[RMDB]
RNA sequence: GGGAACGACUCGAGUAGAGUCGAAAAGCAGCUCGUCGCCGGCGACCUUGCUCACCGCCACGCUGUUGGAGACGAACACCACGGUGGUGGCGCGGUACUUGCCGACAAGCGCCUCGACCAGGUACAACCUAAUCCCUAUCUUCGGAUAGGGAUUAGGAAAAGAAACAACAACAACAAC
Reactivity to 2A3 in 0.01 (KOAc 150mM, MgCl2 10mM, bicine 150mM(pH8.5), 24C), signal-to-noise 4, nucleotides 027 to 126: g030c030a020g010c010u020c020g030u000c020g050c070c020g040g030c050g010a060c010c020u040u080g020c030u030c070a060c000c030g000c000c010a030c050g050c040u050g040u290u090g050g030a090g010a100c130g080a100a040c020a020c060c000a030c020g000g030u120g060g040u010g010g010c010g000c000g000g000u040a120c060u120u180g030c040c020g010a020c020a030a020g010c020g030c040c000u040c040g040a040c020c030a010g120g000u130a070c030a080a020
Reactivity to DMS in 0.01 (KOAc 150mM, MgCl2 10mM, bicine 150mM(pH8.5), 24C), signal-to-noise 5, nucleotides 027 to 126: g010c060a100g010c030u000c090g000u000c060g010c080c070g010g010c030g000a060c070c060u000u000g020c050u000c100a100c120c010g000c010c000a120c080g000c060u000g010u020u010g020g010a150g010a120c130g000a090a080c140a060c020c020a090c070g020g020u000g010g030u000g000g010c020g000c040g000g030u000a060c150u000u000g020c050c030g020a090c060a080a090g010c050g000c020c000u020c040g000a100c020c040a110g000g020u010a050c150a090a180